Source: RMDB library OK3TST, as collected in RNAgym. This 207-nucleotide RNA was probed chemically with 2A3. The reactions ran in a buffer of 150 mM KOAc, 10 mM MgCl2 and 150 mM bicine (pH 8.5), at 24 C.
[RMDB]
RNA sequence: GGGAACGACUCGAGUAGAGUCGAAAAGUGUUUGAUCAGACUCAAGUACAGCGGUCUCUUCGAAGCUUUAGCCACAUUCGUGUCCUGUGAUCUAAUACCUUUUUUAAGAUAAGCAUGAACAUUCGCUUGGGACUUAUGCCACUAGUACGAAAGAGAAUACGAUAUGCCCAUUCGUGGGCAUAUCGUAAAAAGAAACAACAACAACAAC
Reactivity to 2A3 in 0.01 (KOAc 150mM, MgCl2 10mM, bicine 150mM(pH8.5), 24C), signal-to-noise 1, nucleotides 027 to 156: g130u060g060u080u050u060g070a060u050c020a000g010a010c000u000c110a100a070g020u120a040c060a020g010c040g020g050u030c020u000c000u040u130c020g060a040a030g080c010u110u160u050a040g040c030c020a060c020a110u140u080c100g000u020g120u080c020c010u080g000u180g040a070u000c010u020a000a070u060a090c010c060u010u040u060u000u010u190a070a060g020a060u060a010a030g050c040a000u020g140a020a010c040a140u010u010c020g020c110u000u020g020g000g000a020c000u010u080a130u110g000c010c010a020c160u070a020g000u000a000c030g140a120a040a000g030a000g050a000a010